[RMDB]
RNA sequence: GGGAACGACUCGAGUAGAGUCGAAAACGUCCUAGUUUCGACUAGGACGAAAUAAAUUCAGCGGUAAAUAAUCGAGGCGUAUUACCGCUGAACGCCUCGAUAAAAUGCGAUGAUUCGUCAUCGCAAAGAUAAUCUAACGCUUCGGCGUUAGAUUAUCAAAAGAAACAACAACAACAAC
Reactivity to 2A3 in 0.01 (KOAc 150mM, MgCl2 10mM, bicine 150mM(pH8.5), 24C), signal-to-noise 3, nucleotides 027 to 126: c000g000u020c000c000u000a000g000u030u070u090c190g080a020c020u000a000g010g030a000c000g000a000a010a000u090a010a030a040u070u060c020a010g010c010g080g050u100a100a040a060u160a100a110u140c060g000a020g030g010c020g020u020a040u060u090a040c010c000g000c000u000g000a000a000c000g020c000c000u030c010g000a000u100a090a120a020a040u060g010c010g000a000u000g000a000u030u060c170g070u020c070a000u000c000g000c000a000a020a010
Reactivity to DMS in 0.01 (KOAc 150mM, MgCl2 10mM, bicine 150mM(pH8.5), 24C), signal-to-noise 2, nucleotides 027 to 126: c010g000u000c000c000u000a000g000u010u020u000c160g020a030c010u000a000g000g020a010c000g000a010a040a060u020a060a060a120u000u000c020a020g030c010g010g010u000a060a050a100u000a070a040u010c050g000a040g010g020c030g000u010a050u000u000a060c010c000g020c000u000g000a020a040c040g010c000c000u000c060g030a080u030a020a060a090a110u010g000c010g000a020u010g010a020u020u030c180g040u000c000a000u000c010g010c010a000a010a090
The record gives the reactivity of an RNA of 177 nucleotides to 2A3 and DMS. The 2A3 profile rests on 4,285 reads. Source: RMDB library M2PK50, as collected in RNAgym. The RNA was probed in 150 mM KOAc, 10 mM MgCl2 and 150 mM bicine (pH 8.5) at 24 C. 2A3 adducts were read by reverse transcription with SuperScript II with manganese.